Description:
Chemical mapping of a 177-nucleotide RNA with DMS and 2A3. For DMS the reverse transcriptase was MarathonRT. For DMS, 5,706 sequencing reads were counted. Reactivities are given for positions 27 through 126. For 2A3 the reverse transcriptase was SuperScript II with manganese.
RNA sequence: GGGAACGACUCGAGUAGAGUCGAAAAAAAAGAUAAUUGAAGGGUGUUUUGUUUAUGGCAAUUGCUGUGUUAUUAAAUCGAAUGUUUCGAAUGGAACACAAUCCAUUAUUUGAAUAUAUUUAUCAACAACUAUAACCAGGUUCGCCUGGUUAUAGUUAAAAGAAACAACAACAACAAC
Reactivity to DMS in 0.01 (KOAc 150mM, MgCl2 10mM, bicine 150mM(pH8.5), 24C), signal-to-noise 3, nucleotides 027 to 126: a070a050a050a040g010a050u030a040a020u020u010g000a090a070g010g000g000u000g010u000u000u010u000g000u000u010u000a030u020g010g000c050a110a070u040u000g030c070u000g010u020g010u000u010a070u030u020a040a050a070u010c070g000a050a090u030g030u010u000u000c060g000a050a030u010g000g010a060a040c100a050c260a040a130u010c020c010a030u000u010a050u030u000u000g000a030a040u000a070u030a050u020u010u010a060u010c030a040a090c100
Reactivity to 2A3 in 0.01 (KOAc 150mM, MgCl2 10mM, bicine 150mM(pH8.5), 24C), signal-to-noise 2, nucleotides 027 to 126: a000a000a000a000g110a030u110a050a120u020u060g040a020a040g220g000g000u010g000u030u060u050u000g040u010u130u000a070u030g050g050c030a120a060u030u180g000c070u070g030u080g060u110u090a090u080u200a060a070a060u140c050g000a150a010u090g050u090u020u040c040g030a000a020u030g010g000a030a020c020a000c010a130a070u000c000c000a000u060u000a090u000u130u020g040a070a010u210a000u000a070u050u060u040a160u270c030a020a110c020